[RMDB]
RNA sequence: GGGAACGACUCGAGUAGAGUCGAAAAGGUAGGGCAUUCGUGCCCUACCACACCUCUAAGCAGAUUGGCGAGGACGACGUCGGGGCCCACGUUUACCAACAACUACUCUCUCCUUCGGGAGAGAGAAAGACAGAGUCCAAUUCGUUGGACUCUGUCUAAAAGAAACAACAACAACAAC
Reactivity to DMS in 0.01 (KOAc 150mM, MgCl2 10mM, bicine 150mM(pH8.5), 24C), signal-to-noise 2, nucleotides 027 to 126: g010g030u000a010g000g040g030c010a080u000u030c240g010u010g030c000c000c040u000a000c000c000a070c200a080c020c000u000c100u010a090a120g060c090a060g010a080u000u000g020g010c010g000a190g020g010a040c070g000a060c060g040u000c050g030g000g030g000c030c020c030a140c040g010u000u000u020a070c070c050a080a010c170a040a030c110u000a210c000u000c000u000c000u000c010c000u000u020c200g010g000g000a020g000a000g000a010g020a000a040
Reactivity to 2A3 in 0.01 (KOAc 150mM, MgCl2 10mM, bicine 150mM(pH8.5), 24C), signal-to-noise 2, nucleotides 027 to 126: g010g020u020a010g000g030g000c010a020u000u060c160g090u060g000c020c000c020u010a000c000c000a000c000a000c010c010u030c060u060a080a080g020c050a040g050a300u120u230g130g000c000g010a050g000g030a030c050g000a020c070g040u030c050g000g020g050g060c030c030c020a030c000g000u030u050u080a240c010c010a030a050c010a030a010c050u100a060c010u000c010u000c010u000c000c000u000u060c160g070g000g010a000g010a000g010a020g000a000a000